[RMDB]
RNA sequence: GGGAACGACUCGAGUAGAGUCGAAAAGGGCAAUUCAUCUCUGGGAAUUAUCGUCGGGAUCGACGAUUCACCGGCCGCACAGGUUGCGGUGCGGUGGGCAGCUCGGGAUGCGGAGUUGCGAAAAAUCCAUAAAUAAUCGAUUCGUCGAUUAUUUAUGAAAAGAAACAACAACAACAAC
Reactivity to DMS in 0.01 (KOAc 150mM, MgCl2 10mM, bicine 150mM(pH8.5), 24C), signal-to-noise 9, nucleotides 027 to 126: g010g010g000c030a030a040u030u020c030a040u010c020u010c010u040g020g000g010a090a060u030u020a030u000c010g010u010c000g000g010g020a130u060c020g010a010c000g000a020u010u030c020a020c000c010g000g000c000c000g010c000a010c040a250g010g010u050u000g010c000g000g010u000g010c000g000g010u000g010g010g010c180a110g000c010u000c020g010g000g000a050u010g010c300g000g000a110g000u000u000g000c010g000a010a060a070a090a080u020c100
Reactivity to 2A3 in 0.01 (KOAc 150mM, MgCl2 10mM, bicine 150mM(pH8.5), 24C), signal-to-noise 9, nucleotides 027 to 126: g070g020g000c030a020a040u060u030c010a040u030c060u040c080u140g020g010g060a080a110u190u060a030u090c010g020u000c010g020g050g210a230u270c020g010a000c000g010a000u040u030c000a000c000c000g000g000c000c000g050c010a010c020a080g270g050u180u020g000c010g000g030u120g300c000g000g000u010g000g020g010c040a020g020c000u010c000g010g020g010a030u060g040c040g030g030a040g020u010u010g010c010g070a110a020a000a010a020u040c020